RNA sequence: GGGAACGACUCGAGUAGAGUCGAAAAAUCUACUACACUGAACAAACUGGCAGUAGCAUCAGAUGUGAUAGAGAAUGUAUACACAAGUGAAAUCCAAUAUUAUGUAUACUUGAGUAAAAAGGUGAAAUGUUGUGUUCAAUUUCGAUUGAACACAACAAAAAGAAACAACAACAACAAC
Reactivity to 2A3 in 0.01 (KOAc 150mM, MgCl2 10mM, bicine 150mM(pH8.5), 24C), signal-to-noise 1, nucleotides 027 to 126: a020u010c010u030a070c000u000a080c030a010c070u020g020a110a000c060a090a100a080c040u080g070g030c010a030g040u060a010g000c010a020u080c050a020g070a170u090g010u000g030a020u070a040g020a000g000a040a010u030g020u050a050u020a040c010a000c050a070a060g050u090g110a100a020a130u110c000c000a020a000u080a060u280u060a030u100g000u030a010u020a020c000u060u080g020a040g020u140a070a100a090a040a000g050g000u060g070a000a110a170
Reactivity to DMS in 0.01 (KOAc 150mM, MgCl2 10mM, bicine 150mM(pH8.5), 24C), signal-to-noise 2, nucleotides 027 to 126: a130u000c030u000a030c030u020a040c040a060c010u010g010a040a070c090a040a070a060c060u000g010g000c070a060g030u000a060g020c110a100u000c020a030g000a080u010g030u000g020a030u000a040g020a040g000a160a020u010g010u010a020u000a020c020a010c100a030a030g020u000g000a110a070a070u010c070c100a080a120u000a080u000u010a050u000g010u010a040u000a010c010u000u000g010a100g020u000a040a040a080a050a030g000g000u000g010a080a050a100
Record summary
This 177-nucleotide RNA was probed chemically with 2A3 and DMS. The data come from the RNA Mapping Database (RMDB), library OK2TRN. DMS adducts were read by reverse transcription with MarathonRT.